[RMDB]
RNA sequence: GGGAACGACUCGAGUAGAGUCGAAAAAGCCUGCCAAGUUGUGGGUGCAGCAUGGUACCAGGCAGCCCAACCCUGACCUAAAGUAAAUUCCCGGAAGAAGUCUUUCCUGGGUUUUGAAUUUGCAGUACUACACUGUCUUAUUCGUAAGACAGUGUAGAAAAGAAACAACAACAACAAC
Reactivity to DMS in 0.01 (KOAc 150mM, MgCl2 10mM, bicine 150mM(pH8.5), 24C), signal-to-noise 5, nucleotides 027 to 126: a110g010c040c010u000g010c020c030a070a090g020u000u000g010u000g000g010g010u030g010c000a050g010c060a060u010g000g010u030a100c210c060a050g010g010c030a120g010c010c010c020a090a180c140c030c020u020g000a060c050c040u000a050a050a090g000u020a090a040a060u010u010c010c010c010g010g000a050a020g000a220a140g000u020c050u000u000u010c010c020u030g030g000g010u000u010u010u010g000a100a170u000u010u010g010c080a070g010u030a180
Reactivity to 2A3 in 0.01 (KOAc 150mM, MgCl2 10mM, bicine 150mM(pH8.5), 24C), signal-to-noise 8, nucleotides 027 to 126: a000g020c020c010u020g000c010c010a080a060g020u040u040g030u080g100g110g100u190g030c010a000g020c010a020u030g030g000u030a110c130c070a020g010g000c010a020g020c000c000c000a020a040c040c010c020u060g100a100c010c020u090a080a060a030g020u030a030a050a040u040u010c000c000c000g030g000a030a030g040a110a040g120u050c030u040u070u050c010c050u120g010g010g030u000u000u000u030g020a020a010u040u020u100g030c020a010g050u050a040

The record gives the reactivity of an RNA of 177 nucleotides to DMS and 2A3. It was measured as part of the RMDB libraries RFM100 and RFMREP. For DMS the reverse transcriptase was MarathonRT. 2A3 is a SHAPE reagent: it acylates the 2'-hydroxyl of flexible nucleotides of all four kinds.